[RMDB]
RNA sequence: GGGAACGACUCGAGUAGAGUCGAAAAGAAUGUUUGUAAACCGUGUGGCACACAAUGGCUAUUCAGGAAUCGUUCUGAGGCAACAGGUAAAAUGGAAGAAAGCCAAAUCCUUAGCAAACGGAAGAAACCUCCGUAUUAGUUUCGACUAAUACGGAGGAAAAGAAACAACAACAACAAC
Reactivity to DMS in 0.01 (KOAc 150mM, MgCl2 10mM, bicine 150mM(pH8.5), 24C), signal-to-noise 3, nucleotides 027 to 126: g010a090a010u020g020u010u010u040g000u010a040a070a080c020c020g040u000g020u000g000g000c010a110c150a080c190a090a130u030g020g010c010u000a040u010u040c030a130g000g010a030a120u060c100g010u000u010c030u000g000a110g000g010c070a060a050c180a050g020g020u040a030a040a070a070u000g000g020a120a190g000a140a050a120g020c020c040a040a050a100u030c010c020u000u040a110g010c050a010a100a070c110g000g010a070a110g000a040a050a060
Reactivity to 2A3 in 0.01 (KOAc 150mM, MgCl2 10mM, bicine 150mM(pH8.5), 24C), signal-to-noise 3, nucleotides 027 to 126: g130a110a030u110g040u100u100u060g080u040a090a050a060c030c020g030u000g010u050g050g000c000a030c020a040c030a200a180u090g010g010c000u020a070u160u050c030a030g100g060a110a060u070c000g060u060u080c020u040g060a040g000g050c030a110a010c010a080g000g010u100a090a060a060a100u110g050g020a000a020g060a140a110a040g030c010c000a000a080a050u040c000c050u010u040a000g010c040a040a130a020c000g000g110a020a080g180a100a020a020
An RNA of 177 nucleotides, treated with DMS and 2A3 and read out base by base. For 2A3, 2,173 sequencing reads were counted. High DMS reactivity at an A or C suggests that its Watson-Crick edge is free.